[RMDB]
RNA sequence: GGGAACGACUCGAGUAGAGUCGAAAAGCACGCCACCGAGUCACACAUGAAACACUACCCGUCAGUGACUGUGACCCUCACUCCGGGAGGAGGACACCGGUAGCCGGGCAGUUUGACUGGGGCGGUAAUGCUUAGGCUCAUUCGUGAGCCUAAGCAUAAAAGAAACAACAACAACAAC
Reactivity to DMS in 0.01 (KOAc 150mM, MgCl2 10mM, bicine 150mM(pH8.5), 24C), signal-to-noise 3, nucleotides 027 to 126: g010c040a100c000g010c000c000a180c010c000g000a030g040u000c010a100c150a080c090a190u030g040a230a070a050c250a110c070u010a080c060c000c020g000u000c090a120g030u020g020a050c060u000g000u000g000a160c040c030c020u010c070a100c030u020c060c040g000g030g000a090g000g000a040g000g010a150c040a070c040c120g000g020u000a140g000c030c040g000g020g060c010a020g000u010u030u020g000a110c020u000g000g000g000g020c000g010g000u000a050
Reactivity to 2A3 in 0.01 (KOAc 150mM, MgCl2 10mM, bicine 150mM(pH8.5), 24C), signal-to-noise 3, nucleotides 027 to 126: g030c030a000c070g020c000c050a180c060c020g110a010g030u060c000a040c000a010c010a160u170g110a040a040a010c100a020c060u130a070c020c000c000g040u040c050a080g020u020g140a060c040u030g030u030g060a080c000c020c000u030c030a150c040u020c020c060g090g060g010a020g010g040a050g030g030a030c010a000c020c020g000g000u000a010g030c040c000g000g000g020c020a020g000u050u100u110g000a030c010u030g000g000g000g010c060g000g000u040a100

Chemical mapping of a 177-nucleotide RNA with DMS and 2A3.
Reactivities are given for positions 27 through 126.
High 2A3 reactivity points to a flexible backbone, as in loops and unpaired stretches.